[RMDB]
RNA sequence: GGGAACGACUCGAGUAGAGUCGAAAAGAUAUGGAUCCCAGCUGCCGAUAAGGUCCCAUCGGAAACGAUGGAAGACCUUUUGACGGCACCUGGGAUCCUAAGUCAAAGGAGUGGUUCGCCACUCCAACCCAGUAGGCUAGUUCGCUAGCCUACUGGGAAAAGAAACAACAACAACAAC
Reactivity to 2A3 in 0.01 (KOAc 150mM, MgCl2 10mM, bicine 150mM(pH8.5), 24C), signal-to-noise 1, nucleotides 027 to 126: g000a000u010a000u100g000g010a010u000c020c000c010a000g000c050u030g000c000c050g300a160u120a300a000g000g000u000c000c030c010a000u010c030g020g000a040a010a000c020g020a000u010g050g000a020a000g000a000c010c000u030u070u060u130g180a150c170g030g020c010a010c000c000u010g000g080g010a000u000c000c000u010a000a000g020u040c010a030a190a090g000g020a000g000u020g100g040u130u300c300g120c140c000a010c010u000c000c010a000a030
Reactivity to DMS in 0.01 (KOAc 150mM, MgCl2 10mM, bicine 150mM(pH8.5), 24C), signal-to-noise 1, nucleotides 027 to 126: g000a060u000a170u000g000g000a010u000c000c000c010a000g040c180u000g030c000c000g010a110u000a020a040g010g010u000c070c000c000a020u000c050g050g000a060a090a150c000g030a030u000g010g000a110a210g000a000c000c000u000u000u000u050g050a190c220g010g000c000a000c250c000u000g000g010g000a010u000c000c000u000a000a030g000u000c000a060a220a090g000g000a030g040u000g000g010u000u010c300g020c000c000a000c000u000c000c010a040a080